[RMDB]
RNA sequence: GGGAACGACUCGAGUAGAGUCGAAAAAUCAAAUGAUAUCCGCUAUUACAAGAGUACGUUAUACUAGAGCCAAAGUCUACUCCGCCAAUAUCAAGUUGGCCAUUAUCGAUAUCUCGAGGCGAUGGGCAUCUCCGUUUAAUACAUUGAUUAAAGAGUGAUUAGUCAUAACUUUCGAGUUAUGACUAAUAAAAGAAACAACAACAACAAC
Reactivity to 2A3 in 0.01 (KOAc 150mM, MgCl2 10mM, bicine 150mM(pH8.5), 24C), signal-to-noise 9, nucleotides 027 to 156: a000u080c060a040a050a090u160g020a030u050a060u080c050c030g000c060u050a090u190u090a080c060a100a030g010a010g040u040a060c060g010u080u060a080u030a140c060u070a040g010a010g080c010c020a060a060a020g020u000c010u010a040c020u030c020c030g010c010c010a020a010u060a050u170c040a100a070g030u010u020g020g000c000c010a050u080u100a060u130c020g020a020u010a030u110c060u020c040g030a020g010g020c030g030a050u040g010g020g020c030a080u030c020u000c020c020g040u040u060u080a040a020u060a030c040a060u050u100g050a020u050u140a100a060a020g080a020g050u100g030
Reactivity to DMS in 0.01 (KOAc 150mM, MgCl2 10mM, bicine 150mM(pH8.5), 24C), signal-to-noise 6, nucleotides 027 to 156: a110u020c060a090a090a130u010g010a070u010a070u000c020c040g040c070u000a110u000u000a130c070a050a150g000a090g010u000a050c050g020u000u000a100u000a080c050u010a080g010a100g020c030c030a070a080a110g020u000c020u000a050c020u010c010c050g010c010c010a050a050u010a110u010c110a060a160g010u010u000g010g010c010c050a070u000u000a070u000c030g010a080u000a070u000c040u000c050g000a080g010g020c050g010a090u000g020g000g010c030a100u000c030u000c020c040g010u000u000u000a070a100u000a080c060a120u000u000g010a100u010u000a050a050a070g010a090g030u010g010
The record gives the reactivity of an RNA of 207 nucleotides to 2A3 and DMS. Values cover nucleotides 27 to 156.